[RMDB]
Chemical mapping of a 207-nucleotide RNA with DMS and 2A3. DMS adducts were read by reverse transcription with MarathonRT. 2A3 adducts were read by reverse transcription with SuperScript II with manganese. For 2A3, 5,484 sequencing reads were counted. Values cover nucleotides 27 to 156. For DMS, 6,182 sequencing reads were counted.

RNA sequence: GGGAACGACUCGAGUAGAGUCGAAAAUAACUCAAACCAAAAGAGGAGUCCACUGUACCAAGCAUGCGUCGGAAUCGCAAGCGACAUCAACCGACUUCUUGACGUCGAAAUGCCUACCAGCGUCAAGCUCGAGGCUAUCACAAGUGGUGAAGUCGAAAUUAUAAGAUGCAUUCGUGCAUCUUAUAAUAAAAGAAACAACAACAACAAC
Reactivity to DMS in 0.01 (KOAc 150mM, MgCl2 10mM, bicine 150mM(pH8.5), 24C), signal-to-noise 3, nucleotides 027 to 156: u000a050a120c040u040c040a080a080a250c080c040a050a110a130a220g000a120g000g000a130g010u000c050c050a060c070u010g020u000a090c000c020a060a140g010c030a090u010g030c020g010u000c030g050g000a200a070u000c050g010c020a050a240g040c010g030a030c040a030u000c020a030a070c060c020g020a070c060u000u000c040u000u010g020a030c030g020u000c030g000a050a090a130u000g030c030c010u010a150c040c030a050g030c000g010u000c130a090a150g020c030u000c050g000a140g020g020c010u000a130u010c060a060c080a070a120g020u000g010g030u000g000a040a080g020u000c030g000a050a060
Reactivity to 2A3 in 0.01 (KOAc 150mM, MgCl2 10mM, bicine 150mM(pH8.5), 24C), signal-to-noise 7, nucleotides 027 to 156: u100a030a020c040u040c070a120a070a110c040c040a080a080a050a010g070a050g030g030a020g050u000c020c020a040c050u080g040u090a070c040c030a060a030g020c020a050u080g020c010g020u040c070g060g140a070a070u090c020g000c090a070a030g060c010g050a060c020a090u090c040a020a070c040c010g010a010c000u010u000c000u030u090g050a020c040g030u070c040g020a040a030a050u170g000c000c010u160a300c070c040a000g020c020g120u230c230a090a050g010c010u000c010g020a020g000g000c010u020a020u020c030a020c040a140a070g030u040g040g040u050g050a020a000g010u020c010g020a110a030